RNA sequence: GGGAACGACUCGAGUAGAGUCGAAAACGCCUCCACCACAGCACAGCUUGCCGAUCAGGCUGUGUUGUGGCGGGGGCGAAACAGGAUCGACAAGGGUGUAAAGAUCGCUCUUUUACUCGGCAUGAUAAGUCACCGUUACAUUCGUGUAACGGUGACUAAAAGAAACAACAACAACAAC
Reactivity to DMS in 0.01 (KOAc 150mM, MgCl2 10mM, bicine 150mM(pH8.5), 24C), signal-to-noise 1, nucleotides 027 to 126: c020g010c000c000u000c000c010a000c000c010a020c000a020g000c000a000c000a000g000c000u000u000g000c300c270g010a120u080c000a010g000g000c000u010g020u000g000u000u030g020u000g000g010c100g040g000g040g000g020c000g000a000a030a060c160a150g010g000a060u030c040g010a030c080a200a060g020g030g000u000g000u000a080a130a090g010a120u030c080g030c100u000c000u000u000u010u000a060c090u000c010g000g000c290a100u020g050a120u000a010
Reactivity to 2A3 in 0.01 (KOAc 150mM, MgCl2 10mM, bicine 150mM(pH8.5), 24C), signal-to-noise 3, nucleotides 027 to 126: c000g000c000c000u000c000c010a010c000c010a030c000a000g010c000a000c000a000g000c000u020u000g050c030c070g150a200u270c020a000g000g010c000u000g000u000g000u000u000g000u000g020g030c000g010g000g000g000g000c000g010a000a000a000c000a020g110g030a170u090c000g030a000c040a030a040g010g020g040u040g060u170a160a120a000g090a060u200c040g010c000u000c000u010u060u020u010a030c010u010c000g040g020c040a050u140g040a090u130a130